[RMDB]
The record gives the reactivity of an RNA of 177 nucleotides to 2A3 and DMS.
For 2A3, 679 sequencing reads were counted.
The RNA was probed in 150 mM KOAc, 10 mM MgCl2 and 150 mM bicine (pH 8.5) at 24 C.
For DMS the reverse transcriptase was MarathonRT.
The DMS profile rests on 1,694 reads.
RNA sequence: GGGAACGACUCGAGUAGAGUCGAAAAAACGCCUCUAAGUCAGAAUCCGUGCUAGAUACAAUGACCUUGUCCCGCGCAUUUACCGUUGUGUCGAAAUAAGGCGUAAGCCUGUGAACCAUUAUAAGCGCUACCAGUAGAUGUUCGCAUCUACUGGUAGAAAAGAAACAACAACAACAAC
Reactivity to 2A3 in 0.01 (KOAc 150mM, MgCl2 10mM, bicine 150mM(pH8.5), 24C), signal-to-noise 1, nucleotides 027 to 126: a000a010c030g020c020c000u000c050u020a090a060g020u040c010a010g070a140a070u000c160c000g060u050g060c010u000a030g030a100u030a080c030a000a070u110g050a090c030c000u070u000g030u050c030c020c000g000c010g000c030a060u030u050u110a140c090c060g060u060u060g020u040g030u070c000g030a110a040a060u110a040a010g010g010c010g050u030a080a000g030c000c020u080g060u010g020a080a030c030c000a000u030u100a110u130a190a000g060c030g000
Reactivity to DMS in 0.01 (KOAc 150mM, MgCl2 10mM, bicine 150mM(pH8.5), 24C), signal-to-noise 2, nucleotides 027 to 126: a050a060c150g010c030c020u000c080u000a070a080g000u030c070a070g000a190a070u010c040c040g040u000g010c070u010a060g000a100u000a080c070a050a050u000g000a080c030c050u000u010g020u000c010c020c020g040c080g000c020a080u000u000u000a060c110c050g030u020u020g010u000g010u000c000g010a100a080a120u000a110a030g000g010c000g000u010a160a130g000c020c010u000g030u000g000a100a090c050c010a050u020u000a060u020a040a090g000c140g020